RNA sequence: GGGAACGACUCGAGUAGAGUCGAAAACAGCCCGAGGAGGGCCUCGAACGACUCAAACCUGGACUUCUGCGAUUGUCGCUUCCUUUUCCUGCCUCUGAGCUCGGGAGGGGUUUCCCGCCUCGCAGCCACCCGACGGAGCAUUCGUGCUCCGUCGGGUAAAAGAAACAACAACAACAAC
Reactivity to 2A3 in 0.01 (KOAc 150mM, MgCl2 10mM, bicine 150mM(pH8.5), 24C), signal-to-noise 1, nucleotides 027 to 126: c050a000g040c000c000c000g010a050g020g070a040g010g000g000c000c000u020c030g040a020a030c020g090a080c000u050c010a130a120a060c020c040u030g020g010a000c030u050u110c030u070g000c030g110a090u030u140g070u080c000g020c030u050u030c030c000u020u000u020u020c000c020u020g060c000c000u020c030u040g030a050g030c050u010c100g000g040g000a020g000g000g000g040u000u070u110c010c000c000g010c000c000u000c000g030c050a030g020c020c000
The record gives the reactivity of an RNA of 177 nucleotides to 2A3. For 2A3 the reverse transcriptase was SuperScript II with manganese. The data come from the RNA Mapping Database (RMDB), library RFM100. Reactivities are given for positions 27 through 126. The reactions ran in a buffer of 150 mM KOAc, 10 mM MgCl2 and 150 mM bicine (pH 8.5), at 24 C.